[RMDB]
RNA sequence: GGGAACGACUCGAGUAGAGUCGAAAACUAAUUUAUCCACUCCGAUUGCGGCAAAGUUGGUGACGAAAAGUACGUUAACUGGGAAGAACUUUCAUCUACAUGACCUUUGACGUUAUUACUUCCGAUGUUGGCCAAGAUGACAGAGUAGAGAAUGUCACAUUACCGUGCAUUUCGAUGCACGGUAAUGAAAAGAAACAACAACAACAAC
Reactivity to DMS in 0.01 (KOAc 150mM, MgCl2 10mM, bicine 150mM(pH8.5), 24C), signal-to-noise 3, nucleotides 027 to 156: c060u030a040a100u000u010u000a140u020c030c030a080c020u000c030c050g030a140u000u000g020c090g000g010c050a070a050a070g060u000u010g040g040u000g010a130c090g020a060a060a080a160g020u000a070c080g020u000u010a050a080c110u000g010g020g010a120a080g000a070a140c100u000u000u000c080a080u000c040u000a070c050a160u000g000a140c060c030u010u000u000g030a080c080g010u020u000a120u000u000a080c100u000u000c050c000g000a130u020g010u000u000g020g010c020c050a050a130g030a100u020g000a160c040a060g000a050g050u000a100g010a150g000a040a100u000g000u000c040a150
Reactivity to 2A3 in 0.01 (KOAc 150mM, MgCl2 10mM, bicine 150mM(pH8.5), 24C), signal-to-noise 3, nucleotides 027 to 156: c010u050a080a130u010u090u210a120u030c040c060a050c040u000c000c030g140a090u030u130g030c030g010g000c000a080a080a110g020u070u020g030g000u030g020a020c030g030a090a050a040a090g080u060a010c030g010u030u070a100a000c030u050g000g040g030a030a030g050a070a030c020u070u140u150c090a090u020c030u120a080c020a130u100g100a060c000c030u000u010u030g030a030c000g010u050u070a080u090u100a070c030u060u020c010c030g010a020u030g020u050u010g060g000c010c000a020a060g030a010u030g020a030c020a050g020a020g060u100a000g020a000g050a110a080u110g010u010c020a000